[RMDB]
The record gives the reactivity of an RNA of 177 nucleotides to DMS and 2A3. The reactions ran in a buffer of 150 mM KOAc, 10 mM MgCl2 and 150 mM bicine (pH 8.5), at 24 C.
RNA sequence: GGGAACGACUCGAGUAGAGUCGAAAACAAACACUGAAGAAAGUCAAAGGACUGUACUACUUUGUAGGUGUAGCAGUCGCCCAGUGGGAAAGCGUCAGUGUUUGUGUGGUUGAGUGGGGAACAAAUUAAAGUGUUUAAUAUUCGUAUUAAACACUUUAAAAGAAACAACAACAACAAC
Reactivity to DMS in 0.01 (KOAc 150mM, MgCl2 10mM, bicine 150mM(pH8.5), 24C), signal-to-noise 6, nucleotides 027 to 126: c010a000a010a000c010a010c000u000g000a020a030g000a130a120a150g020u030c120a010a010a010g010g000a010c000u000g010u000a030c010u000a010c000u020u010u040g010u000a030g010g000u000g000u010a020g010c010a010g000u000c000g000c000c000c000a110g010u030g020g020g010a010a100a040g010c030g010u000c000a010g010u000g010u000u000u000g010u000g010u010g010g010u000u010g000a100g010u000g010g000g010g000a040a030c060a030a140a130u000u000
Reactivity to 2A3 in 0.01 (KOAc 150mM, MgCl2 10mM, bicine 150mM(pH8.5), 24C), signal-to-noise 3, nucleotides 027 to 126: c000a010a000a000c000a000c000u020g000a030a020g150a190a200a070g170u220c090a050a000a010g000g010a000c000u010g010u040a020c010u010a010c010u100u170u300g090u210a030g000g000u110g010u100a000g030c000a000g010u010c000g000c000c010c010a080g110u300g040g010g000a040a040a030g160c030g040u010c000a000g010u000g000u000u000u000g010u010g010u030g060g020u050u100g040a060g030u120g020g030g010g090a050a070c010a020a060a000u040u010